[RMDB]
RNA sequence: GGGAACGACUCGAGUAGAGUCGAAAAGCUGCAGUGUUCGUCGAUGCCGCGGUCGGCGGCGAUCGCUGACCGGCCCGUUGGCGUCUUGCGGUGGAUCCGCAGAUACGUUUCGGUGUAGCGCUCGGCGACGGUGCUAUGGUUUCGACCAUAGCACCGUAAAAGAAACAACAACAACAAC
Reactivity to 2A3 in 0.01 (KOAc 150mM, MgCl2 10mM, bicine 150mM(pH8.5), 24C), signal-to-noise 2, nucleotides 027 to 126: g030c020u080g020c070a080g080u040g020u080u040c010g000u010c010g010a010u140g030c040c010g070c000g030g010u020c010g010g020c000g020g000c060g080a190u190c110g000c010u000g080a250c000c000g000g000c000c040c020g040u120u200g020g010c000g000u000c010u030u120g010c000g060g000u140g160g140a070u110c020c000g000c010a020g010a100u110a050c090g050u020u000u090c000g000g100u090g060u110a030g000c050g020c040u000c010g000g030c000g000
Reactivity to DMS in 0.01 (KOAc 150mM, MgCl2 10mM, bicine 150mM(pH8.5), 24C), signal-to-noise 2, nucleotides 027 to 126: g010c030u010g000c100a050g020u000g000u000u000c020g020u000c040g000a030u010g010c010c020g040c050g020g000u000c010g000g000c030g000g020c160g000a050u010c120g020c010u000g010a070c000c000g020g000c030c010c050g010u020u000g040g030c020g000u000c030u010u010g040c030g010g000u000g010g000a180u020c000c020g000c000a010g000a070u000a040c080g010u000u000u000c020g000g000u010g000u010a050g010c040g000c030u000c000g000g000c040g010
Annotation: Conditions: 150 mM KOAc, 10 mM MgCl2 and 150 mM bicine (pH 8.5), 24 C. The record gives the reactivity of an RNA of 177 nucleotides to 2A3 and DMS. The 2A3 profile rests on 1,868 reads. For 2A3 the reverse transcriptase was SuperScript II with manganese. DMS adducts were read by reverse transcription with MarathonRT. High DMS reactivity at an A or C suggests that its Watson-Crick edge is free.